[RMDB]
RNA sequence: GGGAACGACUCGAGUAGAGUCGAAAAGAUAUGGAUCAUCUACUGACCGUGAUGACCACUCUCGGAAACGAGAGUGCAAGCGGAGUAGAGUGAUCCUAAGUCAAAGUAACUGGUUCGCCAGUUACAAGGGUAAAGGAUAGUUCGCUAUCCUUUACCCAAAAGAAACAACAACAACAAC
Reactivity to 2A3 in 0.01 (KOAc 150mM, MgCl2 10mM, bicine 150mM(pH8.5), 24C), signal-to-noise 4, nucleotides 027 to 126: g020a030u080a020u220g000g000a000u010c000a000u000c000u010a020c020u090g300a290c010c040g020u050g070a300u100g050a060c060c000a010c000u000c000u000c010g050g030a130a120a100c020g010a000g000a000g020u000g000c000a210a120g010c000g000g050a030g000u030a000g020a050g120u060g000a000u000c010c000u000a130a020g030u020c050a160a000a080g000u000a000a000c000u010g010g110u050u070c300g050c080c000a000g000u010u000a000c000a010a090
Reactivity to DMS in 0.01 (KOAc 150mM, MgCl2 10mM, bicine 150mM(pH8.5), 24C), signal-to-noise 5, nucleotides 027 to 126: g010a050u000a300u010g000g000a010u000c000a080u000c000u000a010c000u010g000a170c020c010g010u000g020a070u000g010a150c300c000a010c000u010c000u010c000g000g000a140a120a210c000g020a010g000a020g010u000g000c000a070a060g030c000g030g000a080g020u000a000g000a050g030u010g020a000u000c000c010u000a020a110g000u000c050a110a130a250g000u000a000a000c000u000g000g000u000u020c230g020c000c000a000g000u010u000a000c000a070a090